Description
Chemical mapping of a 177-nucleotide RNA with DMS and 2A3.
RNA sequence: GGGAACGACUCGAGUAGAGUCGAAAAAGCUGAGGCACUACGGUGCCUCAGCAAUGCGUGUAAGACCUGCCCGAAGCAAUGAAGGCCGAGGAGUCGGUACGGGAGUGUGUAGGGCAGGCUCGCAAAACAUCGCAAUCUAAUUCGUUAGAUUGCGAUGAAAAGAAACAACAACAACAAC
Reactivity to DMS in 0.01 (KOAc 150mM, MgCl2 10mM, bicine 150mM(pH8.5), 24C), signal-to-noise 6, nucleotides 027 to 126: a070g010c000u000g000a020g000g020c000a000c010u000a120c170g030g010u000g020c000c010u020c000a020g010c010a020a020u020g000c010g010u030g020u000a010a010g020a110c010c010u010g010c000c000c000g000a180a300g000c020a010a010u010g010a300a180g000g000c000c000g010a020g000g040a160g010u010c000g010g010u000a060c010g020g000g000a270g000u000g000u000g000u000a300g010g000g000c010a010g000g000c010u010c000g000c010a040a050a130a190
Reactivity to 2A3 in 0.01 (KOAc 150mM, MgCl2 10mM, bicine 150mM(pH8.5), 24C), signal-to-noise 6, nucleotides 027 to 126: a000g000c000u000g000a000g000g000c030a010c020u030a050c300g110g000u000g000c020c010u000c000a000g000c000a000a000u010g000c030g010u300g010u080a010a010g070a100c000c000u000g000c000c000c010g040a060a000g000c000a000a030u090g020a030a020g010g010c000c000g010a030g120g080a130g270u050c010g010g030u110a300c020g000g000g030a140g040u030g010u070g030u060a010g000g000g000c000a000g000g000c000u000c000g000c000a020a040a020a030
2A3 adducts were read by reverse transcription with SuperScript II with manganese. Conditions: 150 mM KOAc, 10 mM MgCl2 and 150 mM bicine (pH 8.5), 24 C. Source: RMDB libraries RFM100 and RFMREP, as collected in RNAgym. DMS adducts were read by reverse transcription with MarathonRT.